[RMDB]
Chemical mapping of a 207-nucleotide RNA with 2A3 and DMS. For DMS, 2,209 sequencing reads were counted. DMS adducts were read by reverse transcription with MarathonRT. Values cover nucleotides 27 to 156. The data come from the RNA Mapping Database (RMDB), library RNAMAK.
RNA sequence: GGGAACGACUCGAGUAGAGUCGAAAAGGACGGCUUUCGAGCCGUCCAAAAAGAUAUGGAUAUACGUAACAUCGACAUGCUCGAAAGAUUCGGAAACGAAUCUAAGAGCAACAGCGUGGUAUAUCCUAAGUCAAAAAACGGCGGUUCGCCGCCGUAAUGAUUCCGUAUGUUUCGACAUACGGAAUCAAAAAGAAACAACAACAACAAC
Reactivity to 2A3 in 0.01 (KOAc 150mM, MgCl2 10mM, bicine 150mM(pH8.5), 24C), signal-to-noise 2, nucleotides 027 to 156: g000g060a000c020g000g050c020u150u130u170c250g030a030g030c000c010g020u000c000c000a030a010a010a000a010g020a010u030a000u040g000g000a000u000a000u010a010c020g090u130a140a090c030a220u230c050g040a060c040a120u140g000c000u010c000g040a210a080a150g010a000u010u000c000g020g010a020a040a040c020g000a010a010u000c000u000a000a030g000a000g040c030a010a000c010a000g050c010g010u040g000g000u000a000u000a000u000c000c000u000a070a000g080u020c020a000a060a130a130a000a020c020g180g010c010g040g040u030u140c180g030c070c000g010c000c010g000u020a000a040
Reactivity to DMS in 0.01 (KOAc 150mM, MgCl2 10mM, bicine 150mM(pH8.5), 24C), signal-to-noise 1, nucleotides 027 to 156: g030g000a000c000g020g030c010u000u000u030c250g010a040g010c000c000g080u000c000c000a000a020a060a070a120g000a110u000a260u010g010g020a010u000a010u000a020c030g010u000a090a140c060a050u000c000g020a120c110a280u000g010c010u000c010g000a290a030a080g000a030u000u000c010g020g010a300a090a300c020g000a020a020u000c000u000a050a300g000a040g000c000a050a050c070a070g060c030g000u000g040g010u000a040u000a000u000c000c010u000a050a110g000u000c000a000a010a100a030a000a080c000g000g020c000g030g000u000u010c300g000c070c010g000c000c000g010u000a000a060